RNA sequence: GGGAACGACUCGAGUAGAGUCGAAAAACGUGCGGUACGCCGCACGAAAUAUUACUUGGUAGUACUGGCAUAUGGACAUUGGUGAUUUAACUCAAUGUUCAUAUUUCAGUAUUUCCAAGUGAGAUAACUGCAAAAGUUUCUUCGGAAACUUUUGCAGAAAAGAAACAACAACAACAAC
Reactivity to 2A3 in 0.01 (KOAc 150mM, MgCl2 10mM, bicine 150mM(pH8.5), 24C), signal-to-noise 1, nucleotides 027 to 126: a010c000g000u020g000c000g000g000u060a040c240g010c030c000g000c010a000c000g000a010a000a010u140a000u000u000a000c000u000u000g030g000u020a040g030u020a000c020u000g000g000c010a000u000a000u010g000g000a000c000a040u000u000g060g070u080g150a300u080u130u300a130a010c020u080c040a000a010u000g000u000u000c000a000u000a000u000u020u000c000a000g000u000a000u000u000u000c000c000a000a030g000u000g000a000g000a020u150a070a040
This 177-nucleotide RNA was probed chemically with 2A3. The RNA was probed in 150 mM KOAc, 10 mM MgCl2 and 150 mM bicine (pH 8.5) at 24 C.